RNA sequence: GGGAACGACUCGAGUAGAGUCGAAAAGAUUGCAGGUAUGGCUUCGACUCGCCGCCCGGGGAAAGCUGUGACACGAUCUGAUAGUGCGGCGUGGAGGACGAGGCGUUCACAACGUCCCACUGCGUAGAAACGUCGGCCGUCGGCAUACGGCUGGUCAACUAUCAGUACGGUUCGCCGUACUGAUAGUAAAAGAAACAACAACAACAAC
Reactivity to 2A3 in 0.01 (KOAc 150mM, MgCl2 10mM, bicine 150mM(pH8.5), 24C), signal-to-noise 4, nucleotides 027 to 156: g080a080u150u150g020c070a070g000g030u130a080u220g120g010c020u020u020c020g050a050c020u000c020g000c020c010g000c000c000c020g000g000g010g030a060a110a040g040c070u150g060u100g180a040c080a030c130g070a060u040c030u110g060a160u060a130g100u080g080c000g000g000c020g010u030g020g060a100g030g030a010c000g010a050g020g040c060g030u020u040c070a060c030a120a070c090g080u070c010c010c020a050c050u040g000c030g020u090a070g120a080a100a010c030g060u040c000g030g020c020c000g000u030c050g100g010c020a080u110a110c000g000g000c000u000g010g000u050c020a030
Reactivity to DMS in 0.01 (KOAc 150mM, MgCl2 10mM, bicine 150mM(pH8.5), 24C), signal-to-noise 1, nucleotides 027 to 156: g040a140u030u010g040c040a080g060g000u000a050u000g040g010c030u010u000c030g000a130c000u000c020g060c020c030g000c040c000c000g070g030g020g000a100a110a160g030c020u000g050u010g000a240c120a060c040g010a180u000c060u000g000a160u010a100g030u030g000c040g020g000c000g020u020g040g000a120g010g010a110c060g010a050g000g010c040g000u000u000c080a080c040a040a050c020g010u000c010c000c020a100c060u000g020c030g040u000a150g000a080a050a110c040g000u000c020g000g010c030c000g010u000c000g000g000c090a140u000a110c010g000g000c020u000g060g000u000c050a190